Source: RMDB libraries RFM100 and RFMREP, as collected in RNAgym. Structure probing data (DMS and 2A3) for a 177-nucleotide construct. The reactions ran in a buffer of 150 mM KOAc, 10 mM MgCl2 and 150 mM bicine (pH 8.5), at 24 C.
RNA sequence: GGGAACGACUCGAGUAGAGUCGAAAAGAUGAACUGAAAAAGAUUCAAAGUAGCGGUUUGAGCGAUGUGUAUAGACAGUAACCCGGUAAAAUGUACUGAAAAUAGGGAUAAGAGUUGAACAGGUGCAUAAUUAGCCGAUAUUCGUAUCGGCUAAUUAAAAAGAAACAACAACAACAAC
Reactivity to DMS in 0.01 (KOAc 150mM, MgCl2 10mM, bicine 150mM(pH8.5), 24C), signal-to-noise 7, nucleotides 027 to 126: g020a140u020g000a070a040c050u000g010a050a070a150a110a060g000a110u000u010c040a050a080a090g010u010a060g020c020g000g000u000u010u010g010a080g010c060g000a060u000g010u010g010u020a060u010a070g010a110c040a030g000u010a060a120c050c020c020g020g010u020a040a040a070a060u020g010u000a030c060u000g000a050a020a050a090u020a050g000g000g010a070u010a050a080g000a070g010u000u000g000a050a080c090a050g000g010u000g010c090a100
Reactivity to 2A3 in 0.01 (KOAc 150mM, MgCl2 10mM, bicine 150mM(pH8.5), 24C), signal-to-noise 3, nucleotides 027 to 126: g070a060u150g010a050a000c060u040g080a020a010a000a080a010g130a100u060u080c030a080a050a010g050u090a060g070c050g010g120u030u070u130g050a010g000c020g050a110u040g000u010g020u030a070u020a130g120a070c030a000g090u040a050a080c020c020c010g020g000u120a140a150a060a030u090g000u080a010c010u020g070a040a080a080a050u080a030g030g020g000a030u040a060a060g130a010g000u030u040g050a030a020c020a030g050g010u010g000c010a030